[RMDB]
RNA sequence: GGGAACGACUCGAGUAGAGUCGAAAAAUGCAUUUCUCUCUAACAUUGAGCUGUGAUGGGGAAGCAACUACGGUUGCGAACUCUCUGAUGUCACACUGCCAAGAAAAGCUUCUAGCGUAAAGUCAUAUCUACCCGUACCGCAAACCGACACAGGUAGCAUGAUUAGCAUGUUCGCAUGCUAAUCAUGAAAAGAAACAACAACAACAAC
Reactivity to DMS in 0.01 (KOAc 150mM, MgCl2 10mM, bicine 150mM(pH8.5), 24C), signal-to-noise 2, nucleotides 027 to 156: a100u000g010c060a100u010u000u010c020u000c030u010c040u040a080a110c100a140u000u000g010a150g040c060u000g040u010g010a070u010g010g010g010g050a110a240g000c010a060a060c010u000a090c240g030g000u000u020g010c000g010a070a080c070u000c010u000c070u000g010a120u010g000u000c030a080c020a100c050u000g000c030c020a040a090g000a050a120a100a080g040c010u000u010c050u000a130g010c040g020u000a050a080a070g000u000c040a070u010a060u000c010u000a020c000c010c000g040u010a020c040c010g040c020a080a080a110c130c030g010a050c030a050c030a040g000g010u010a050g000
Reactivity to 2A3 in 0.01 (KOAc 150mM, MgCl2 10mM, bicine 150mM(pH8.5), 24C), signal-to-noise 6, nucleotides 027 to 156: a000u120g000c020a060u010u080u010c020u000c000u000c030u060a090a050c050a140u070u110g040a050g030c050u020g020u040g030a080u120g000g000g010g070a060a040g010c010a000a010c020u040a040c180g110g000u010u000g010c020g050a100a060c020u030c000u000c040u070g090a130u140g030u040c000a000c000a010c060u050g000c010c010a060a030g060a050a100a020a010g030c000u100u040c070u180a070g010c030g040u080a100a070a060g020u060c030a060u050a050u110c020u010a030c010c000c020g040u040a060c030c030g020c080a080a080a040c060c010g070a030c050a010c020a110g040g010u010a000g020